RNA sequence: GGGAACGACUCGAGUAGAGUCGAAAAGUCACGUGGUACGCCACGUGACAACCGGAAACGGAGAUGACGAUCGGGCGCAUCUGGAGAAAUUCUAAACGCCAAAGCGAGGAGUUACGACUCCUCGCAACAUCGCUACGGAGUUCGCUCCGUAGCGAUGAAAAGAAACAACAACAACAAC
Reactivity to DMS in 0.01 (KOAc 150mM, MgCl2 10mM, bicine 150mM(pH8.5), 24C), signal-to-noise 2, nucleotides 027 to 126: g060u010c000a030c000g050u000g000g000u000a100c140g140c010c000a000c000g010u020g060a000c000a090a060c010c000g000g040a150a010a080c040g080g030a180g010a020u100g000a080c140g000a100u050c120g000g000g100c100g060c090a050u030c130u000g000g030a110g000a030a170a180u000u000c020u010a010a100a240c030g000c150c050a030a120a150g000c000g060a000g000g000a000g000u000u000a090c120g010a080c000u010c000c000u000c000g040c000a030a040
Reactivity to 2A3 in 0.01 (KOAc 150mM, MgCl2 10mM, bicine 150mM(pH8.5), 24C), signal-to-noise 3, nucleotides 027 to 126: g010u000c000a000c000g020u000g000g000u060a020c270g050c020c000a000c000g010u000g000a010c000a000a000c000c000g040g010a100a070a000c040g060g030a110g030a040u140g050a030c100g080a030u230c080g090g010g000c040g020c030a090u020c050u010g030g020a030g050a020a110a040u160u050c030u050a000a180a130c040g000c010c020a080a010a000g010c000g000a000g000g000a020g000u030u060a040c140g090a040c020u000c000c000u000c000g000c010a000a000